[RMDB]
RNA sequence: GGGAACGACUCGAGUAGAGUCGAAAAGAUAUGGAACUUUCAUCGAUCGUGGACACCGUUGAAAUCGGAAACGAUGGAGGUGUGCACGGGAGAAAGUUCCUAAGUCAAACCCGUCUUCGGACGGGAAGUAUUAGGACUUGUUCGCAAGUCCUAAUACAAAAGAAACAACAACAACAAC
Reactivity to 2A3 in 0.01 (KOAc 150mM, MgCl2 10mM, bicine 150mM(pH8.5), 24C), signal-to-noise 7, nucleotides 027 to 126: g010a020u100a080u160g000g010a010a000c010u060u040u030c070a300u300c140g130a090u060c010g010u000g020g170a000c000a000c010c010g140u250u050g010a040a030a010u010c000g010g030a090a030a030c010g000a000u010g000g050a010g000g010u000g000u040g080c000a000c000g000g010g000a030g000a010a010a000g000u000u000c000c000u000a080a010g020u010c010a030a030a160c000c010c000g000u000c010u050u070c300g140g000a000c000g000g010g000a010a030
Reactivity to DMS in 0.01 (KOAc 150mM, MgCl2 10mM, bicine 150mM(pH8.5), 24C), signal-to-noise 6, nucleotides 027 to 126: g010a040u000a300u010g000g000a010a000c000u000u000u000c010a260u010c130g000a090u010c010g030u000g010g010a020c000a010c000c000g000u000u010g000a100a140a020u000c000g000g000a150a090a140c010g010a010u000g000g010a090g010g030u000g010u000g000c000a000c010g010g010g000a050g010a010a010a010g000u000u000c000c000u010a010a070g010u000c040a090a120a210c000c000c000g000u000c000u000u010c150g020g010a010c000g000g000g000a000a020